[RMDB]
RNA sequence: GGGAACGACUCGAGUAGAGUCGAAAAGAUAUGGAGGUACUCCCCACCUCCAAACUCCGUUGAAAUCGGAAACGAUGGAGGAGGUAGGAGAGGUACCUCCUAAGUCAAAGCAGACUUCGGUCUGCAACGAGAUUAAAAAGUUCGCUUUUUAAUCUCGAAAAGAAACAACAACAACAAC
Reactivity to DMS in 0.01 (KOAc 150mM, MgCl2 10mM, bicine 150mM(pH8.5), 24C), signal-to-noise 3, nucleotides 027 to 126: g010a060u010a290u000g000g000a020g000g030u010a020c040u000c080c010c000c070a300c070c000u000c000c020a020a130a190c040u000c010c010g000u000u000g000a100a160a040u000c020g000g000a120a080a090c040g000a080u000g000g000a190g010g010a000g020g000u000a150g000g000a050g000a110g010g010u010a010c020c000u000c000c010u010a000a080g010u000c110a070a100a100g010c020a010g000a030c000u000u000c170g030g010u000c000u000g000c010a040a080
Reactivity to 2A3 in 0.01 (KOAc 150mM, MgCl2 10mM, bicine 150mM(pH8.5), 24C), signal-to-noise 3, nucleotides 027 to 126: g050a080u140a140u170g000g000a010g020g000u000a010c020u090c020c020c000c010a010c010c010u030c000c010a030a020a020c020u020c010c000g080u180u030g090a080a070a060u080c030g030g040a120a060a050c080g050a050u090g030g020a050g030g020a010g020g020u050a060g030g040a090g000a010g100g010u010a010c010c000u000c000c000u010a040a000g030u040c060a060a070a080g000c010a000g000a010c000u060u150c300g100g000u010c000u000g000c000a000a000